[RMDB]
RNA sequence: GGGAACGACUCGAGUAGAGUCGAAAAAGGCUUCGGGGACGGGUGAGCCGGCGGCCAGCGGCGAAGCCCAAUAUCUGUCGGGAGUUCCCGGGGUAGUGGCGACGGGAUGGGUGCGAAAUCUAGCGGUAUUAAGAAUGCAGUUCGCUGCAUUCUUAAUAAAAGAAACAACAACAACAAC
Reactivity to 2A3 in 0.01 (KOAc 150mM, MgCl2 10mM, bicine 150mM(pH8.5), 24C), signal-to-noise 4, nucleotides 027 to 126: a000g080g000c010u030u020c010g010g000g020g030a010c040g010g010g010u130g020a030g010c000c000g040g030c020g050g060c050c030a020g030c000g030g000c010g040a030a000g010c000c000c000a030a050u170a060u070c050u070g180u090c020g050g000g000a040g020u050u070c000c000c000g000g000g010g000u060a080g040u030g040g030c050g040a060c020g020g000g020a070u110g040g000g050u040g010c030g030a050a010a060u050c010u020a020g050c040g060g000u010
Reactivity to DMS in 0.01 (KOAc 150mM, MgCl2 10mM, bicine 150mM(pH8.5), 24C), signal-to-noise 4, nucleotides 027 to 126: a070g000g010c020u010u000c020g010g010g010g000a040c110g000g020g000u000g000a300g010c000c020g010g010c050g010g010c020c040a070g030c040g010g000c020g010a160a230g010c010c000c010a100a080u020a110u020c030u010g010u010c100g000g000g010a300g000u000u000c010c000c030g010g010g000g010u000a030g030u020g000g000c090g010a100c110g010g000g000a070u020g010g000g010u000g000c050g000a050a070a050u040c060u010a070g010c040g010g000u020
An RNA of 177 nucleotides, treated with 2A3 and DMS and read out base by base.
For 2A3 the reverse transcriptase was SuperScript II with manganese.
For DMS the reverse transcriptase was MarathonRT.
Conditions: 150 mM KOAc, 10 mM MgCl2 and 150 mM bicine (pH 8.5), 24 C.